This 177-nucleotide RNA was probed chemically with DMS and 2A3.
The 2A3 profile rests on 5,049 reads.
For 2A3 the reverse transcriptase was SuperScript II with manganese.

[RMDB]
RNA sequence: GGGAACGACUCGAGUAGAGUCGAAAAGAAGACGUGACGAAAAGUCACGAAAAAGAGCUAGCAACCAUCCGCUAGCAAAGAUCGAAAGAUCAAAGGAUGGAAAGACCUGGGAGACCAGGUCAAAAGAGGAUUAUCGUCAUUUCGAUGACGAUAAUCCAAAAGAAACAACAACAACAAC
Reactivity to DMS in 0.01 (KOAc 150mM, MgCl2 10mM, bicine 150mM(pH8.5), 24C), signal-to-noise 2, nucleotides 027 to 126: g000a100a120g000a230c000g000u000g040a000c000g000a180a060a090a110g000u010c000a060c100g000a000a040a060a110a130g030a120g000c030u000a020g000c010a100a090c000c030a000u000c000c000g000c000u000a000g000c000a040a060a040g000a040u010c030g000a070a140a190g000a000u000c000a060a080a300g000g000a000u000g000g000a140a090a110g000a000c010c000u000g000g000g060a200g000a270c000c000a000g000g060u010c000a000a010a170a070g000a120
Reactivity to 2A3 in 0.01 (KOAc 150mM, MgCl2 10mM, bicine 150mM(pH8.5), 24C), signal-to-noise 3, nucleotides 027 to 126: g150a040a000g120a020c000g000u010g000a000c020g050a240a030a030a180g000u000c000a000c000g060a060a010a000a020a000g170a020g010c000u010a010g000c000a050a110c000c000a000u000c000c000g020c000u010a000g000c010a010a100a020g000a000u010c010g030a050a020a030g010a000u000c030a020a040a000g010g000a000u020g010g000a000a040a060g010a000c000c020u010g020g000g010a080g010a030c000c000a000g000g000u000c000a000a000a000a000g070a020